Source: RMDB library OK3TST, as collected in RNAgym. Chemical mapping of a 207-nucleotide RNA with 2A3 and DMS. For 2A3, 2,300 sequencing reads were counted. The reactions ran in a buffer of 150 mM KOAc, 10 mM MgCl2 and 150 mM bicine (pH 8.5), at 24 C. 2A3 adducts were read by reverse transcription with SuperScript II with manganese.

RNA sequence: GGGAACGACUCGAGUAGAGUCGAAAAAAGAGAAGACAAUGUGGUGAUGGAGGCAGAGAUUGGAGUGAGGUGGCCACAAGCCAAGGACUGCUGGCAGCUACCAGCAGCCAGAAAAGUCCAGGAACCAAUUCUCUCUUGGAGCUCCAGAGGGAGUGUGUAAUGACAGGUUAUUCGUAACCUGUCAUUAAAAAGAAACAACAACAACAAC
Reactivity to 2A3 in 0.01 (KOAc 150mM, MgCl2 10mM, bicine 150mM(pH8.5), 24C), signal-to-noise 3, nucleotides 027 to 156: a000a000g100a020g020a090a010g040a000c030a030a130u120g020u040g030g050u040g010a080u060g010g010a030g030g030c050a010g030a020g020a050u050u110g020g000a050g020u050g010a040g050g050u020g000g020c020c020a080c030a070a000g010c030c000a040a030g020g010a030c010u030g020c000u000g070g010c020a040g030c040u130a170c070c010a010g000c000a000g000c000c000a000g020a010a210a010a000g000u000c010c010a010g040g030a010a030c010c010a030a050u150u030c010u010c000u000c020u060u090g030g010a050g060c050u040c070c020a020g010a000g050g030g000a030g010u100g000u020g030
Reactivity to DMS in 0.01 (KOAc 150mM, MgCl2 10mM, bicine 150mM(pH8.5), 24C), signal-to-noise 2, nucleotides 027 to 156: a060a040g010a110g020a020a040g030a110c060a060a070u010g010u040g010g020u000g010a170u000g020g040a080g020g020c110a080g000a090g000a140u000u020g020g020a180g050u010g020a130g020g010u010g030g000c000c030a040c110a100a160g040c000c000a090a160g020g020a050c000u010g040c010u000g000g030c000a050g020c070u000a270c120c110a080g000c020a060g000c000c000a060g000a090a040a040a060g010u000c020c040a080g000g010a060a110c060c010a020a080u000u000c020u000c020u000c010u000u010g010g000a220g020c070u000c020c030a140g000a060g030g000g000a040g020u000g020u010g010